[RMDB]
RNA sequence: GGGAACGACUCGAGUAGAGUCGAAAACAGCAGCUAUGGGCUCAAAUUCCGGAGGGACGCUGAGCCAGGUCCCAGCCUGUGCACUGAGCAUGUCAUUCACUUUGAGAUCCCCUCUAGGGUAAGGCACAUACGUACGCGUGUUCGCACGCGUACGUAUAAAAGAAACAACAACAACAAC
Reactivity to DMS in 0.01 (KOAc 150mM, MgCl2 10mM, bicine 150mM(pH8.5), 24C), signal-to-noise 2, nucleotides 027 to 126: c110a080g030c070a060g010c070u000a080u020g010g000g020c000u000c050a020a090a230u010u000c060c040g010g040a130g000g000g000a080c090g010c060u000g000a090g010c060c020a070g000g000u030c060c070c030a140g000c000c020u000g030u010g000c080a130c080u010g000a040g030c010a060u030g000u000c000a010u000u000c090a040c130u010u000u000g010a080g010a110u020c050c000c010c020u020c050u000a050g000g010g000u000a050a100g000g010c070a060c230
Reactivity to 2A3 in 0.01 (KOAc 150mM, MgCl2 10mM, bicine 150mM(pH8.5), 24C), signal-to-noise 1, nucleotides 027 to 126: c000a000g070c040a000g000c040u090a070u230g030g000g030c000u010c070a040a020a050u200u000c020c070g070g040a040g030g050g010a010c010g000c080u080g030a020g040c000c030a010g030g000u050c040c040c020a010g030c010c000u040g050u080g010c060a030c050u030g040a010g010c060a070u120g080u090c050a080u050u020c000a080c060u000u120u000g060a110g020a150u150c000c060c000c020u050c000u010a070g000g030g030u010a010a060g040g000c070a020c010
Structure probing data (DMS and 2A3) for a 177-nucleotide construct. The data come from the RNA Mapping Database (RMDB), library OK2TRN. The DMS profile rests on 1,324 reads.